[RMDB]
RNA sequence: GGGAACGACUCGAGUAGAGUCGAAAAGAUAUGGACGACACUACGACAUGUCGGAUUGUCGGAAACGACAAUGCGACAACAGCGUAGGUGUCGUCCUAAGUCAAAACCAGAGGCUUCGGCCUCUGGACUACAUGUGGAUGUUCGCAUCCACAUGUAGAAAAGAAACAACAACAACAAC
Reactivity to DMS in 0.01 (KOAc 150mM, MgCl2 10mM, bicine 150mM(pH8.5), 24C), signal-to-noise 4, nucleotides 027 to 126: g000a040u000a300u010g010g000a020c000g010a020c000a010c000u000a000c000g010a070c160a300u000g000u000c010g010g000a010u000u000g010u000c000g000g010a120a120a180c000g000a020c000a000a000u000g000c000g000a000c000a030a060c300a160g010c020g000u010a020g010g020u010g030u000c000g020u000c000c000u000a010a070g030u000c030a110a060a150a150c010c000a000g010a030g010g000c000u000u020c280g030g020c000c000u000c000u000g000g010a150
Reactivity to 2A3 in 0.01 (KOAc 150mM, MgCl2 10mM, bicine 150mM(pH8.5), 24C), signal-to-noise 5, nucleotides 027 to 126: g030a030u060a020u150g000g000a000c010g000a000c000a000c020u040a010c020g200a080c100a200u300g010u010c010g080g080a000u000u000g000u000c010g010g040a080a060a020c000g010a000c000a010a010u040g050c000g020a000c010a130a050c080a080g250c010g020u010a060g120g060u020g000u000c000g000u000c000c000u000a010a000g000u010c000a000a000a050a130c000c000a000g000a000g020g000c060u210u240c300g180g000c000c000u000c000u000g000g000a050